[RMDB]
RNA sequence: GGGAACGACUCGAGUAGAGUCGAAAAAAAAAGAUAUGGACCCUCGUACGGUAGCUAUCCUAAGACAGGAUGGUCGGAAACGACCAUCUCGAGGAUAGACCCUACCAGAGGGUCCUAAGUCAAAAAAUCAUUAAACAACGUUCGCGUUGUUUAAUGAAAAAGAAACAACAACAACAAC
Reactivity to DMS in 0.01 (KOAc 150mM, MgCl2 10mM, bicine 150mM(pH8.5), 24C), signal-to-noise 2, nucleotides 027 to 126: a040a050a060a120a060g000a000u000a200u000g000g000a020c000c010c000u000c000g030u010a090c300g010g020u000a020g000c000u000a000u000c000c000u020a100a140g000a240c300a050g000g000a000u010g010g020u020c000g020g010a050a010a080c010g000a000c000c000a010u000c000u000c050g010a010g030g000a000u000a010g000a230c300c300c050u000a000c000c000a300g010a000g000g000g000u010c020c000u000a000a020g000u010c000a010a040a080a010a080a060

Description
The data come from the RNA Mapping Database (RMDB), library TTRDES. The record gives the reactivity of an RNA of 177 nucleotides to DMS. The DMS profile rests on 1,180 reads.